[RMDB]
RNA sequence: GGGAACGACUCGAGUAGAGUCGAAAAUUGUCCCAGCACGCAGCUGCAGAUCUGAGAACGGACAGACUGCCUCCUCAAGUGGGUCCCUGACCCCCGAGUAGCCUAACUGGGAGGCACCCCCCAGUAGACGUAUACAAAGUUUCGACUUUGUAUACGUAAAAGAAACAACAACAACAAC
Reactivity to DMS in 0.01 (KOAc 150mM, MgCl2 10mM, bicine 150mM(pH8.5), 24C), signal-to-noise 9, nucleotides 027 to 126: u010u010g020u000c010c010c020a130g010c100a080c120g020c090a070g010c060u000g010c050a070g000a090u000c040u000g000a110g010a090a110c140g000g000a110c070a060g000a100c210u000g010c010c010u000c010c010u000c060a090a060g020u000g000g000g000u000c150c240c030u010g010a180c040c000c000c010c020g000a050g010u000a130g000c010c010u000a040a040c030u000g000g000g010a020g010g020c010a080c010c000c000c000c000c010a140g010u010a090g000
Reactivity to 2A3 in 0.01 (KOAc 150mM, MgCl2 10mM, bicine 150mM(pH8.5), 24C), signal-to-noise 5, nucleotides 027 to 126: u060u080g030u030c010c000c000a010g040c030a010c070g110c050a070g000c020u090g000c010a020g030a180u020c020u070g060a030g040a260a030c060g040g060a020c010a020g090a070c040u020g000c010c010u020c000c010u130c020a070a000g010u040g010g020g010u060c110c050c050u120g210a270c020c010c000c000c000g000a020g040u050a010g010c010c010u040a080a050c020u010g000g000g010a010g010g000c000a010c000c010c000c000c000c010a000g000u010a080g050
This 177-nucleotide RNA was probed chemically with DMS and 2A3. Values are in units of 0.01, from 0 to 300, in steps of 10. 2A3 adducts were read by reverse transcription with SuperScript II with manganese. Reactivities are given for positions 27 through 126. For DMS, 33,939 sequencing reads were counted. Conditions: 150 mM KOAc, 10 mM MgCl2 and 150 mM bicine (pH 8.5), 24 C.